The data come from the RNA Mapping Database (RMDB), library VIROID. Structure probing data (2A3 and DMS) for a 177-nucleotide construct. DMS adducts were read by reverse transcription with MarathonRT. Conditions: 150 mM KOAc, 10 mM MgCl2 and 150 mM bicine (pH 8.5), 24 C. The 2A3 profile rests on 1,752 reads.

[RMDB]
RNA sequence: GGGAACGACUCGAGUAGAGUCGAAAAGGAUGCUCUUCCCGAUUCCGUCCAUCCCUCCUCCCAGGGGGUCGCCCAGGAAUGGCGGGACCCCACUUCAUCAGGGUCCGCGUUCCAUCCUUUCUUACCUGUACAAUUAAACGUUCGCGUUUAAUUGUACAAAAGAAACAACAACAACAAC
Reactivity to 2A3 in 0.01 (KOAc 150mM, MgCl2 10mM, bicine 150mM(pH8.5), 24C), signal-to-noise 2, nucleotides 027 to 126: g000g050a020u050g040c020u000c010u050u040c000c000c000g000a030u120u060c040c020g040u030c050c020a120u070c020c000c000u010c000c020u000c020c010c000a000g000g020g000g000g020u030c020g000c020c000c000a010g090g060a070a020u120g300g300c040g000g030g040a040c010c030c000c010a030c010u170u170c040a220u080c050a020g020g000g000u030c010c000g010c010g000u010u000c000c020a070u050c060c000u030u060u010c040u050u020a100c030c020u000
Reactivity to DMS in 0.01 (KOAc 150mM, MgCl2 10mM, bicine 150mM(pH8.5), 24C), signal-to-noise 2, nucleotides 027 to 126: g000g000a070u020g010c030u000c030u000u010c040c000c020g020a180u010u000c050c020g000u000c020c020a070u010c020c010c000u000c030c020u000c010c010c040a200g000g030g000g010g010u000c030g010c020c020c020a140g010g010a030a010u000g010g040c060g010g020g000a050c010c010c010c090a080c080u010u030c130a050u020c130a120g000g020g000u000c020c020g000c020g000u000u000c000c010a140u010c070c050u000u000u000c030u000u010a080c210c080u000